Structure probing data (2A3 and DMS) for a 207-nucleotide construct. Values cover nucleotides 27 to 156. The 2A3 profile rests on 2,180 reads. 2A3 adducts were read by reverse transcription with SuperScript II with manganese.
RNA sequence: GGGAACGACUCGAGUAGAGUCGAAAACAGAACUGGAUGGGCCGUGUGCUUAACCAGGACAAGUUCUCCUUCUCUCCAACGUUGUUGCCAACUCAUGAUUCUCCUAACCUGUGCUUGGAGAGACGUGCUACCAUAUAGGUGUUCGCACCUAUAUGAAGGGUUUAAGUAUCUUCGGAUACUUAAACCCAAAAGAAACAACAACAACAAC
Reactivity to 2A3 in 0.01 (KOAc 150mM, MgCl2 10mM, bicine 150mM(pH8.5), 24C), signal-to-noise 4, nucleotides 027 to 156: c050a020g050a080a060c020u030g000g030a040u040g050g070g020c080c110g290u210g130u250g150c010u050u030a070a070c010c000a010g040g060a020c060a090a000g000u010u010c010u020c000c010u090u010c020u020c000u010c020c010a070a050c110g010u020u010g000u000u010g040c020c020a080a040c080u040c100a050u080g080a220u170u030c070u070c070c030u110a100a140c030c020u130g070u150g120c080u100u060g000g010a020g000a010g000a020c010g020u050g020c030u090a120c000c020a000u000a000u000a000g000g000u000g040u050u030c130g010c060a010c000c000u000a000u000a000u000g000a020a060
Reactivity to DMS in 0.01 (KOAc 150mM, MgCl2 10mM, bicine 150mM(pH8.5), 24C), signal-to-noise 1, nucleotides 027 to 156: c020a070g000a130a110c000u010g020g010a250u000g000g000g000c020c070g000u000g020u020g020c010u010u000a060a100c040c000a040g000g020a120c100a110a270g010u020u000c020u000c020c060u000u000c000u020c010u010c030c030a040a110c090g020u000u010g000u000u000g000c010c020a030a160c020u000c030a030u000g010a170u000u000c010u000c000c020u000a000a020c060c060u000g010u000g000c060u000u000g000g000a030g010a030g000a070c030g070u000g000c000u000a150c170c010a020u000a040u000a010g000g010u000g010u000u010c300g010c040a020c000c020u010a010u000a000u000g010a070a100